The record gives the reactivity of an RNA of 207 nucleotides to 2A3 and DMS. For 2A3 the reverse transcriptase was SuperScript II with manganese.
[RMDB]
RNA sequence: GGGAACGACUCGAGUAGAGUCGAAAAGCCGCGGCAAGUGGAGUGAGCGAGAAGAGACUAGGCUUUGGUUUCUUCAAGUGAAGCGGUCACCAAUCAGGUGUGGUAGUUACCGUAAAAAAUCCGGAUUAAUGCCUCAGCGCGUUCGCGCGCUGAGGAAGAUAAUGGAUAGCUUCGGCUAUCCAUUAUCAAAAGAAACAACAACAACAAC
Reactivity to 2A3 in 0.01 (KOAc 150mM, MgCl2 10mM, bicine 150mM(pH8.5), 24C), signal-to-noise 3, nucleotides 027 to 156: g030c010c000g000c000g030g010c090a090a060g050u050g050g040a070g030u080g040a020g010c010g000a040g010a050a010g010a010g010a010c030u050a050g090g190c000u220u130u130g040g000u020u020u020c000u000u000c020a040a020g020u050g090a050a000g010c010g000g040u030c000a000c030c020a020a090u160c090a040g060g020u040g020u040g130g000u020a050g020u040u070a020c000c020g010u050a020a050a050a140a090a020u040c020c000g000g030a070u120u140a110a100u200g000c010c000u010c000a000g000c020g000c000g030u010u110c200g000c000g030c000g010c050u000g000a000g000g000a000a000
Reactivity to DMS in 0.01 (KOAc 150mM, MgCl2 10mM, bicine 150mM(pH8.5), 24C), signal-to-noise 1, nucleotides 027 to 156: g000c020c030g010c070g020g020c030a110a090g010u020g010g010a090g040u000g000a230g000c000g040a300g030a050a080g030a020g000a010c000u000a020g000g000c140u010u000u030g020g050u010u000u000c030u010u000c030a030a300g010u000g000a050a210g000c010g000g000u000c010a120c040c020a060a090u000c080a070g020g000u020g000u000g010g020u010a090g020u000u010a040c040c010g010u020a020a000a160a100a050a150u010c020c010g000g000a300u000u000a080a100u000g000c040c000u010c010a020g020c000g010c000g070u010u010c300g020c060g010c010g030c010u010g040a000g020g010a000a010